The data come from the RNA Mapping Database (RMDB), library M2RFOK. Chemical mapping of a 207-nucleotide RNA with 2A3.
RNA sequence: GGGAACGACUCGAGUAGAGUCGAAAAUCAGAAUCAGGCCGCAGUGUUUAGCGCUCCGUAAACACGGUCGUACAUCCAGCCGGUAGCCUGGUUCCUUGCAUUGAGUGAUGUACGGAGUUUAUAGAGCAAAAGAAAGACCUGUUCGCAGGUCUUUCAACAUGUGAGGUAGCUUCGGCUACCUCACAUGAAAAGAAACAACAACAACAAC
Reactivity to 2A3 in 0.01 (KOAc 150mM, MgCl2 10mM, bicine 150mM(pH8.5), 24C), signal-to-noise 1, nucleotides 027 to 156: u100c000a000g000a000a020u000c000a000g010g000c020c030g050c140a090g010u000g010u060u030u030a060g020c060g010c060u040c010c050g020u030a030a000a000c010a010c050g050g040u040c010g010u000a000c020a010u010c020c020a010g100c080c100g100g020u130a020g000c000c000u000g030g000u000u040c020c040u070u170g080c020a110u000u240g030a010g050u180g030a000u000g000u000a010c000g060g000a060g000u080u140u010a150u040a050g040a000g000c030a070a070a020a070g010a000a000a000g000a010c020c000u000g020u000u060c160g000c060a010g040g000u000c000u000u000u000c000a000a000
Conditions: 150 mM KOAc, 10 mM MgCl2 and 150 mM bicine (pH 8.5), 24 C.
The 2A3 profile rests on 831 reads.